An RNA of 207 nucleotides, treated with 2A3 and read out base by base. It was measured as part of the RMDB library OK3TST. For 2A3 the reverse transcriptase was SuperScript II with manganese. Values cover nucleotides 27 to 156. The RNA was probed in 150 mM KOAc, 10 mM MgCl2 and 150 mM bicine (pH 8.5) at 24 C.
RNA sequence: GGGAACGACUCGAGUAGAGUCGAAAAAGCUACAGAGACAUCGGUCUGAAUAUCUGUCUUGUUGGACAGAGCUACGCUGUACUGUCGCAUAGUCUCGAUAUGUGACUCGAGCCGCGAAACUUUACCGCGGUUACCUUUGCAACACUCCGAGUUAAGGCUGGUUUGAUACGUUCGCGUAUCAAACCAGAAAAGAAACAACAACAACAAC
Reactivity to 2A3 in 0.01 (KOAc 150mM, MgCl2 10mM, bicine 150mM(pH8.5), 24C), signal-to-noise 1, nucleotides 027 to 156: a000g000c010u040a000c010a000g020a020g010a080c010a020u060c000g030g150u110c090u100g050a150a000u110a090u200c000u010g030u000c050u210u240g130u060u300g050g000a000c000a000g020a000g010c040u000a000c000g000c040u020g010u030a050c010u010g000u060c000g000c010a030u030a090g030u000c010u000c030g040a030u060a050u160g100u030g000a010c000u000c020g020a000g000c040c000g030c000g050a050a030a000c030u160u240u180a030c140c010g030c000g040g000u020u000a010c000c030u070u000u160g020c110a060a030c000a010c080u140c050c010g010a010g010u050u090a060a030g080g070